[RMDB]
RNA sequence: GGGAACGACUCGAGUAGAGUCGAAAAGAUAUGGACGGUUGGUCGGCCCAGACUAUUCGGAAACGAACGAAUCUGGGAACUACCGAAGAGACCGUCCUAAGUCAAAAGUUUGCCUUCGGGCAAACAACGUUUUUAAUAUGUUCGCAUAUUAAAAACGAAAAGAAACAACAACAACAAC
Reactivity to DMS in 0.01 (KOAc 150mM, MgCl2 10mM, bicine 150mM(pH8.5), 24C), signal-to-noise 5, nucleotides 027 to 126: g000a030u000a300u000g010g010a000c010g010g030u010u000g030g020u000c030g000g000c000c000c000a020g010a030c060u010a300u000u000c000g000g000a110a120a170c010g020a010a020c140g000a070a100u000c010u000g000g000g000a070a010c040u000a300c010c000g000a020a070g010a190g010a010c000c000g010u000c000c000u010a020a110g000u000c030a090a090a150a090g010u000u000u000g010c000c000u000u010c220g000g000g000c000a000a000a000c000a070a140
Reactivity to 2A3 in 0.01 (KOAc 150mM, MgCl2 10mM, bicine 150mM(pH8.5), 24C), signal-to-noise 3, nucleotides 027 to 126: g010a010u060a030u140g000g010a000c030g010g040u060u090g130g120u040c010g000g000c000c010c010a000g000a010c080u100a060u040u010c000g000g070a110a120a110c030g010a040a010c050g070a090a300u000c000u010g000g000g010a040a040c080u190a080c050c000g010a080a000g170a010g010a050c020c000g000u010c000c000u000a050a020g020u000c010a000a000a090a230g000u010u020u010g000c010c000u030u110c300g040g010g000c000a000a000a000c010a010a000